Chemical mapping of a 177-nucleotide RNA with 2A3 and DMS. The data come from the RNA Mapping Database (RMDB), libraries RFM100 and RFMREP.

RNA sequence: GGGAACGACUCGAGUAGAGUCGAAAAAGCUCCUCUACGGAGGAGCAGCUAAACUAUUUUUGCGAUGUGUUCCUAAUAUGUAAUAUAAAUGUAUUGGGGACAUUUUGCAUUCAUAGUUUUGUAUCAAAACCGUAUACUUUUUCGAAAGUAUACGGUUAAAAGAAACAACAACAACAAC
Reactivity to 2A3 in 0.01 (KOAc 150mM, MgCl2 10mM, bicine 150mM(pH8.5), 24C), signal-to-noise 7, nucleotides 027 to 126: a000g010c010u010c040c010u010c010u030a090c270g110g000a000g010g000a000g000c000a000g000c010u020a000a000a000c000u000a000u000u000u000u000u000g010c010g020a010u010g000u010g000u010u000c000c000u000a000a010u000a010u010g030u020a110a150u120a170u130a260a250a020u080g010u000a010u000u000g010g000g000g000a000c000a000u000u010u000u010g000c000a000u010u000c020a000u000a000g000u000u010u010u050g050u030a150u130c090a070a140
Reactivity to DMS in 0.01 (KOAc 150mM, MgCl2 10mM, bicine 150mM(pH8.5), 24C), signal-to-noise 4, nucleotides 027 to 126: a090g000c000u000c000c010u000c000u010a120c160g020g000a000g000g010a010g020c000a030g000c050u000a010a000a020c000u000a000u000u000u000u000u000g010c010g010a000u000g010u000g010u000u000c000c000u000a010a010u000a010u010g000u000a080a130u040a160u030a110a060a030u000g000u000a000u000u000g000g000g000g000a000c000a000u000u000u000u000g000c010a010u000u000c020a010u000a000g010u000u000u000u000g000u000a080u020c080a080a080
Notes:
2A3 adducts were read by reverse transcription with SuperScript II with manganese. Reactivities are given for positions 27 through 126. Conditions: 150 mM KOAc, 10 mM MgCl2 and 150 mM bicine (pH 8.5), 24 C.